RNA sequence: GGGAACGACUCGAGUAGAGUCGAAAAGCCACCCCGCUGGGCUGUGUGGCCAUAGACAUGCUCGGUGCUGAAGCGCGCACGGCAUCGAGCAACAGCUAUGGCGUAACAUCACAGCCUGUGCUGAAGCGCGCACGGCAACCGAAAGGUGCGUUACGAACGUUUAAUAAUCCUUCGGGAUUAUUAAACGAAAAGAAACAACAACAACAAC
Reactivity to 2A3 in 0.01 (KOAc 150mM, MgCl2 10mM, bicine 150mM(pH8.5), 24C), signal-to-noise 3, nucleotides 027 to 156: g070c070c050a090c070c010c000c020g000c000u020g020g000g020c000u000g010u000g010u020g070g010c000c010a000u020a000g070a160c090a180u080g000c000u000c020g020g000u000g000c000u010g010a120a040g000c000g000c000g000c000a010c010g000g000c020a000u010c000g000a020g030c000a030a010c020a000g050c000u000a000u000g010g000c020g020u080a090a080c050a110u150c000a000c000a000g020c000c000u020g040u030g000c030u160g050a060a040g000c000g010c000g000c000a000c010g090g020c070a160a130c010c040g030a090a060a040g020g010u100g020c030g060u070u160a120c170g100a190a010
Reactivity to DMS in 0.01 (KOAc 150mM, MgCl2 10mM, bicine 150mM(pH8.5), 24C), signal-to-noise 2, nucleotides 027 to 156: g060c130c020a250c000c020c000c070g050c020u010g000g020g010c000u000g020u060g020u010g010g010c000c010a060u000a030g010a050c040a250u010g000c010u000c010g010g040u000g070c000u000g030a010a090g040c020g040c030g010c010a300c020g030g000c020a020u000c010g000a140g070c020a010a010c020a210g020c000u010a030u000g010g000c040g030u000a040a170c110a130u000c000a040c000a040g030c000c000u000g000u010g010c010u010g000a100a140g030c010g040c010g040c020a100c090g020g030c000a080a120c000c010g030a100a120a220g030g020u010g040c030g020u000u000a130c040g030a160a200
Record summary:
The record gives the reactivity of an RNA of 207 nucleotides to 2A3 and DMS. The reactions ran in a buffer of 150 mM KOAc, 10 mM MgCl2 and 150 mM bicine (pH 8.5), at 24 C. It was measured as part of the RMDB library RNAMAK. For DMS, 2,346 sequencing reads were counted. For 2A3 the reverse transcriptase was SuperScript II with manganese. DMS adducts were read by reverse transcription with MarathonRT.